[RMDB]
Chemical mapping of a 177-nucleotide RNA with 2A3 and DMS. Reactivities are rounded to 0.1 and cut off at 0 and 3.
RNA sequence: GGGAACGACUCGAGUAGAGUCGAAAAGCUUUUGCCAGUUGAAUUUGCGACUGGUCUGGAGGUAACUGAUGGAUAUUGUGUAACGUAACCCAAUGGGUUUGUGUUAACUCCAGCGGUUUCAGGCGAAGCCACCGUAGGUAUUCGUACCUACGGUGGCAAAAGAAACAACAACAACAAC
Reactivity to 2A3 in 0.01 (KOAc 150mM, MgCl2 10mM, bicine 150mM(pH8.5), 24C), signal-to-noise 5, nucleotides 027 to 126: g030c000u030u060u130u130g020c010c000a030g010u010u010g090a160a220u130u100u300g140c040g010a010c000u020g010g010u030c010u010g050g010a040g030g030u040a020a010c030u040g070a040u090g090g060a030u050a120u280u200g100u030g070u090a060a020c050g040u000a010a000c000c010c070a080a190u170g000g020g030u040u050u070g100u010g010u010u020a010a010c010u000c010c000a000g010c030g030g010u000u020u030c040a050g070g000c030g040a060a010
Reactivity to DMS in 0.01 (KOAc 150mM, MgCl2 10mM, bicine 150mM(pH8.5), 24C), signal-to-noise 4, nucleotides 027 to 126: g020c040u000u000u010u010g010c000c000a030g010u000u010g010a150a210u010u010u000g000c050g020a010c010u000g020g010u010c090u000g000g000a050g010g000u000a030a030c000u000g010a050u000g000g000a110u010a100u000u010g010u010g000u000a040a070c050g010u010a020a030c000c010c020a120a160u010g020g020g020u000u000u010g040u010g000u000u000a020a040c050u000c000c000a020g000c140g010g000u010u000u000c040a080g010g010c070g010a120a150